This 177-nucleotide RNA was probed chemically with 2A3 and DMS.
Source: RMDB library TTRDEL, as collected in RNAgym.
Conditions: 150 mM KOAc, 10 mM MgCl2 and 150 mM bicine (pH 8.5), 24 C.
High DMS reactivity at an A or C suggests that its Watson-Crick edge is free.
For DMS, 2,675 sequencing reads were counted.
DMS adducts were read by reverse transcription with MarathonRT.

[RMDB]
RNA sequence: GGGAACGACUCGAGUAGAGUCGAAAAGAUAUGGAAGCGCCGUGCUCGCAUGCUAGCUCGGAAACGAGCACAGCAUGAACUACGAGCGGGGCUUCCUAAGUCAAAUCUGAGCGUUCGCGCUCAGAAACUUAAGAGUUUGGUUCGCCAAACUCUUAAGAAAAGAAACAACAACAACAAC
Reactivity to 2A3 in 0.01 (KOAc 150mM, MgCl2 10mM, bicine 150mM(pH8.5), 24C), signal-to-noise 2, nucleotides 027 to 126: g000a000u040a010u180g000g020a000a000g020c290g180c130c040g100u180g070c050u030c030g110c010a000u010g000c010u000a020g000c000u000c000g030g000a050a060a050c010g010a010g040c050a070c020a210g010c000a000u000g010a040a050c070u220a080c110g000a000g000c000g020g000g000g020c000u000u000c000c000u010a030a020g030u000c020a060a030a300u000c000u000g010a000g010c000g000u100u150c300g000c000g000c080u000c010a000g000a020a020a010
Reactivity to DMS in 0.01 (KOAc 150mM, MgCl2 10mM, bicine 150mM(pH8.5), 24C), signal-to-noise 3, nucleotides 027 to 126: g000a020u000a300u010g010g010a030a010g000c000g000c000c020g000u010g030c040u000c020g020c010a020u000g000c020u000a130g010c010u000c000g000g000a050a090a190c000g010a010g010c010a060c170a030g020c000a010u010g010a100a080c120u020a300c040g000a020g030c000g020g000g000g000c000u000u010c000c000u000a010a070g000u020c040a100a120a120u000c000u010g010a000g000c000g030u000u020c260g020c010g000c000u000c000a000g000a010a090a170